[RMDB]
RNA sequence: GGGAACGACUCGAGUAGAGUCGAAAAUCGAGGGUGGCCCCAAGCACCGUGGUAUCCCGAUAUGGCAGUAGCUGUUUGGGCGUGCCCAACCGGUUGGAGCGCCCGGCGGCGAGUACCACACCGGUGAGCGAUCACGUUCCUUCGGGAACGUGAUCGCAAAAGAAACAACAACAACAAC
Reactivity to 2A3 in 0.01 (KOAc 150mM, MgCl2 10mM, bicine 150mM(pH8.5), 24C), signal-to-noise 1, nucleotides 027 to 126: u000c030g000a050g020g000g090u050g030g050c000c050c000c000a030a000g000c000a020c030c010g020u050g100g050u140a240u130c000c030c000g000a080u110a040u150g140g020c080a030g030u240a020g000c030u060g070u140u200u300g040g000g000c070g000u140g000c100c000c000a130a200c100c030g150g010u120u010g000g030a060g000c040g000c000c000c000g080g030c000g000g000c020g010a000g000u080a080c000c000a020c000a000c010c000g030g000u040g060a000